RNA sequence: GGGAACGACUCGAGUAGAGUCGAAAACUGGCAUAGAGGAAACACCCUUAAACAGUGAGGGGUACAAUUGAUAGUUCCAUAGAAUGUUUCACAAGGGGGAUGAGCGAUCAAUGUGAAGAGAGAUGAACCGUAGAUCAGGUUUCGACCUGAUCUACGGAAAAGAAACAACAACAACAAC
Reactivity to 2A3 in 0.01 (KOAc 150mM, MgCl2 10mM, bicine 150mM(pH8.5), 24C), signal-to-noise 1, nucleotides 027 to 126: c030u010g050g090c030a100u090a090g030a100g090g050a030a150a000c040a130c000c030c000u040u010a130a260a000c070a050g020u030g160a010g000g020g000g050u000a050c020a010a210u010u100g040a040u060a130g000u010u050c030c000a010u000a080g100a060a080u220g060u050u070u000c060a080c010a100a120g000g040g000g010g000a050u000g010a010g000c010g000a020u050c020a050a100u090g010u020g030a080a030g000a040g030a010g000a080u110g070a030a010
Reactivity to DMS in 0.01 (KOAc 150mM, MgCl2 10mM, bicine 150mM(pH8.5), 24C), signal-to-noise 1, nucleotides 027 to 126: c070u010g020g030c060a150u000a050g020a230g000g000a120a120a110c140a080c060c020c000u010u000a030a140a140c250a080g030u020g020a050g000g000g000g000u000a120c120a040a110u040u000g030a080u010a100g020u000u020c030c080a040u010a110g010a070a100u000g010u000u000u010c000a040c030a090a060g010g000g020g000g020a180u000g000a060g000c040g050a040u000c020a010a100u000g000u010g020a070a030g010a050g000a150g010a070u020g000a050a120
The data come from the RNA Mapping Database (RMDB), library OK2TRN.
The record gives the reactivity of an RNA of 177 nucleotides to 2A3 and DMS.
The RNA was probed in 150 mM KOAc, 10 mM MgCl2 and 150 mM bicine (pH 8.5) at 24 C.
The DMS profile rests on 841 reads.